Structure probing data (DMS and 2A3) for a 207-nucleotide construct. For DMS the reverse transcriptase was MarathonRT. The RNA was probed in 150 mM KOAc, 10 mM MgCl2 and 150 mM bicine (pH 8.5) at 24 C.
RNA sequence: GGGAACGACUCGAGUAGAGUCGAAAAUCACACCUGUAGCCCAGGAUUUUGGGAGGCCAUGGUGUGAGGACUGCUUGAGCUCAGGAGUUUGAGACUAGCCUGGGAAACCUAGCAAGAUCCCUUCUCUACAGAAAUUAAGGAAACUUAGCCAGGUGUACAUGGUAAUAGCUUUCGAGCUAUUACCAUGAAAAGAAACAACAACAACAAC
Reactivity to DMS in 0.01 (KOAc 150mM, MgCl2 10mM, bicine 150mM(pH8.5), 24C), signal-to-noise 2, nucleotides 027 to 156: u010c000a020c000a000c000c000u000g030u010a060g070c010c020c010a150g010g000a180u000u010u000u010g040g040g000a070g030g030c070c060a130u000g030g010u000g020u000g000a020g020g020a030c060u010g040c030u000u000g010a160g020c030u010c040a140g020g000a160g000u000u000u010g020a110g010a090c050u000a220g000c000c010u000g040g030g010a120a150a090c040c060u000a080g020c010a070a100g010a290u000c020c000c010u010u000c040u000c060u000a300c060a170g000a090a060a130u000u000a080a130g010g000a070a060a060c010u000u000a120g020c000c040a040g020g020u010g010u000a160
Reactivity to 2A3 in 0.01 (KOAc 150mM, MgCl2 10mM, bicine 150mM(pH8.5), 24C), signal-to-noise 1, nucleotides 027 to 156: u040c010a010c000a020c000c020u030g040u090a060g000c010c000c020a080g150g090a280u110u170u260u130g080g020g000a100g070g030c040c050a150u120g000g000u000g000u010g010a000g000g020a010c000u010g000c000u030u050g030a020g030c000u010c020a000g010g030a070g080u120u220u210g140a100g040a030c020u040a040g080c000c000u000g000g020g000a070a080a040c020c000u020a000g010c040a080a030g020a170u020c010c000c000u020u020c030u000c010u010a050c030a040g140a070a130a050u150u140a110a020g050g020a100a030a080c030u070u030a060g030c010c020a050g000g050u040g050u050a050